[RMDB]
RNA sequence: GGGAACGACUCGAGUAGAGUCGAAAACUCCGAAGCCGGAGGGAAACCGACAGCCCGCAGCUUAUGCGAGGGGCGGGGUGUGCUCGCCUGUAGUCCCUGCCGUACGACCCGAAGCCGGGCGAUCUAGUGUCCAUGACAAUUUCGAUUGUCAUGGACAAAAAGAAACAACAACAACAAC
Reactivity to 2A3 in 0.01 (KOAc 150mM, MgCl2 10mM, bicine 150mM(pH8.5), 24C), signal-to-noise 3, nucleotides 027 to 126: c020u010c000c000g080a160a050g130c110c000g000g040a010g000g030g040a080a030a010c020c030g020a040c090a020g030c000c000c000g070c050a050g010c010u040u080a050u240g020c030g050a110g040g030g000g000c000g000g000g020g000u080g060u200g010c040u060c050g070c060c140u070g110u190a000g080u140c010c000c000u030g000c000c000g030u030a030c020g130a210c010c000c000g020a000a000g020c000c000g010g040g000c010g020a020u050c050u070a070g060
Reactivity to DMS in 0.01 (KOAc 150mM, MgCl2 10mM, bicine 150mM(pH8.5), 24C), signal-to-noise 3, nucleotides 027 to 126: c000u000c000c000g020a120a220g060c220c030g000g000a130g000g000g000a090a100a210c010c020g000a090c170a220g010c000c020c000g010c090a120g010c020u030u040a060u010g020c070g010a150g000g000g020g000c070g010g000g000g040u020g050u050g040c040u010c040g010c070c040u000g000u020a120g000u010c040c000c000u000g000c020c020g010u010a060c050g000a240c130c020c030g010a070a100g000c040c020g020g000g010c060g030a100u010c060u000a070g020
Source: RMDB library RFM100, as collected in RNAgym. This 177-nucleotide RNA was probed chemically with 2A3 and DMS. The 2A3 profile rests on 1,244 reads. Reactivities are rounded to 0.1 and cut off at 0 and 3.